This 177-nucleotide RNA was probed chemically with 2A3.
The RNA was probed in 150 mM KOAc, 10 mM MgCl2 and 150 mM bicine (pH 8.5) at 24 C.
[RMDB]
RNA sequence: GGGAACGACUCGAGUAGAGUCGAAAAGUAGCAAUUUUAUUGAAGAUUCAAGUUUGAUUGACCUUUGUUAGGGUGAUUAACCUUUCUGAAAUUAAAAGCCAGAGCUGAAUUAUUCUGUCCAAUUUAAGAGGUUAGGAACAUUCGUGUUCCUAACCUCAAAAGAAACAACAACAACAAC
Reactivity to 2A3 in 0.01 (KOAc 150mM, MgCl2 10mM, bicine 150mM(pH8.5), 24C), signal-to-noise 1, nucleotides 027 to 126: g050u020a080g020c000a280a300u000u000u060u130a000u000u020g080a130a000g030a020u100u110c070a000a000g000u000u020u020g020a000u000u050g120a140c000c050u000u000u050g160u150u300a030g010g000g120u000g000a070u070u110a020a000c000c000u000u000u050c000u000g100a030a050a040u120u100a120a080a050a000g000c000c000a000g000a000g050c000u000g070a000a270u180u090a120u150u000c050u120g030u060c110c050a100a000u010u010u010a270a060